[RMDB]
RNA sequence: GGGAACGACUCGAGUAGAGUCGAAAAGAUAUGGAUCCUUAUACGCUUGGACCUCACUCUCGGAAACGAGAGGUGAGCUAGCGUAUAGGAUCCUAAGUCAAAACCUAUAAACUUCGGUUUAUAGGAAGUAGAACGUACACUUCGGUGUACGUUCUACAAAAGAAACAACAACAACAAC
Reactivity to DMS in 0.01 (KOAc 150mM, MgCl2 10mM, bicine 150mM(pH8.5), 24C), signal-to-noise 1, nucleotides 027 to 126: g000a060u000a240u000g000g020a030u000c000c010u000u010a010u000a000c000g000c030u000u000g050g000a080c300c000u000c000a030c010u000c010u010c000g010g000a030a030a120c000g000a000g000a040g000g000u000g010a000g000c010u000a010g020c000g030u000a000u000a010g000g000a000u000c000c010u000a000a050g010u000c040a110a110a120a150c000c000u000a000u000a000a000a020c000u000u020c240g020g000u010u000u000a000u000a000g010g010a030a010
Reactivity to 2A3 in 0.01 (KOAc 150mM, MgCl2 10mM, bicine 150mM(pH8.5), 24C), signal-to-noise 1, nucleotides 027 to 126: g020a000u040a030u100g000g000a000u000c010c000u140u150a010u020a010c000g010c000u170u300g070g010a070c000c020u000c000a020c000u010c000u000c010g010g030a030a010a010c010g020a010g000a000g040g030u020g010a000g050c010u020a010g020c000g000u010a050u000a020g000g000a000u020c000c000u020a010a000g010u030c010a010a080a080a120c010c000u010a010u010a000a020a000c000u060u130c300g050g000u020u000u000a010u000a000g010g000a010a020
Structure probing data (DMS and 2A3) for a 177-nucleotide construct.
Values cover nucleotides 27 to 126.
For 2A3 the reverse transcriptase was SuperScript II with manganese.
The reactions ran in a buffer of 150 mM KOAc, 10 mM MgCl2 and 150 mM bicine (pH 8.5), at 24 C.